[RMDB]
RNA sequence: GGGAACGACUCGAGUAGAGUCGAAAAUCGGGCUUUACGCUUACCAGUGAAGAUUCGUCUGAGGUAGCGUUUUUGCUAGUUGAAAACUACAACUAUGACUGCUCCAGUUGGCCUUCGGGUCGGCUGGUUGCAAUUUUUUGUUCGCAAAAAAUUGCAAAAAAGAAACAACAACAACAAC
Reactivity to DMS in 0.01 (KOAc 150mM, MgCl2 10mM, bicine 150mM(pH8.5), 24C), signal-to-noise 4, nucleotides 027 to 126: u020c080g000g010g010c030u010u000u000a000c010g010c000u000u010a020c020c010a170g020u040g000a080a040g000a050u010u040c150g000u000c010u000g000a150g010g030u000a010g010c000g010u000u000u010u000u030g020c030u000a040g010u000u000g000a050a060a110a110c110u020a120c020a010a030c030u010a070u030g010a090c100u010g000c100u000c020c010a010g000u000u000g000g000c010c010u010u060c200g020g000g010u000c000g000g000c000u000g010g000
Reactivity to 2A3 in 0.01 (KOAc 150mM, MgCl2 10mM, bicine 150mM(pH8.5), 24C), signal-to-noise 3, nucleotides 027 to 126: u130c030g060g000g000c010u050u040u020a030c010g000c010u040u050a060c000c000a060g070u040g200a060a050g050a170u050u130c150g120u040c120u030g020a010g120g010u000a000g000c010g010u050u010u000u030u130g010c000u000a040g000u040u020g100a050a090a120a070c050u120a110c020a040a020c000u060a080u230g090a080c070u050g020c020u000c000c000a000g010u000u000g000g000c010c000u010u030c300g030g000g000u000c000g010g000c010u000g000g010